[RMDB]
RNA sequence: GGGAACGACUCGAGUAGAGUCGAAAAGAGGAGAAAAAGGCGAGGAGAGCCUAGGCACAGGAAGGUGACCGCUUCCCUCCCUCCCAGUGCUGAUUUCCUGUGGACCAGAUUCCAGCACAGUGGAGGGCCAGAGCUCAGGGAACAGACCCAGCAGCAAUGCCAUUAAAUUAUUCGUAAUUUAAUGGCAAAAAGAAACAACAACAACAAC
Reactivity to DMS in 0.01 (KOAc 150mM, MgCl2 10mM, bicine 150mM(pH8.5), 24C), signal-to-noise 2, nucleotides 027 to 156: g010a090g020g000a110g020a030a050a060a160a150g020g010c080g000a130g020g010a080g020a080g010c020c020u000a030g030g020c010a110c050a100g000g010a080a070g010g000u010g000a070c030c070g000c060u000u000c010c010c020u000c040c000c000u000c000c040c000a250g010u010g020c000u020g010a060u000u010u010c020c040u000g010u000g040g000a200c140c060a110g000a110u010u000c060c010a020g030c020a040c000a120g030u000g000g010a050g000g000g000c040c040a020g010a170g000c030u020c030a090g020g020g020a030a060c060a090g000a110c000c000c010a180g010c030a100g020c050a110a240
Reactivity to 2A3 in 0.01 (KOAc 150mM, MgCl2 10mM, bicine 150mM(pH8.5), 24C), signal-to-noise 1, nucleotides 027 to 156: g030a000g000g020a030g000a010a020a010a120a050g060g000c060g040a020g030g060a070g000a000g000c010c050u030a030g000g020c050a000c020a040g050g000a030a010g070g010u010g010a050c000c030g050c060u030u010c000c010c030u000c000c000c000u000c000c000c000a000g010u000g000c000u010g000a020u030u040u040c050c020u060g020u140g070g060a020c000c030a020g000a000u030u030c040c000a000g020c010a000c010a000g090u160g100g000a000g000g000g000c010c020a010g010a000g010c010u010c040a010g020g020g030a040a060c020a010g030a060c020c000c000a010g110c010a000g040c030a010a130
Structure probing data (DMS and 2A3) for a 207-nucleotide construct. For DMS, 3,184 sequencing reads were counted. For 2A3 the reverse transcriptase was SuperScript II with manganese. Source: RMDB library OK3TST, as collected in RNAgym. The reactions ran in a buffer of 150 mM KOAc, 10 mM MgCl2 and 150 mM bicine (pH 8.5), at 24 C.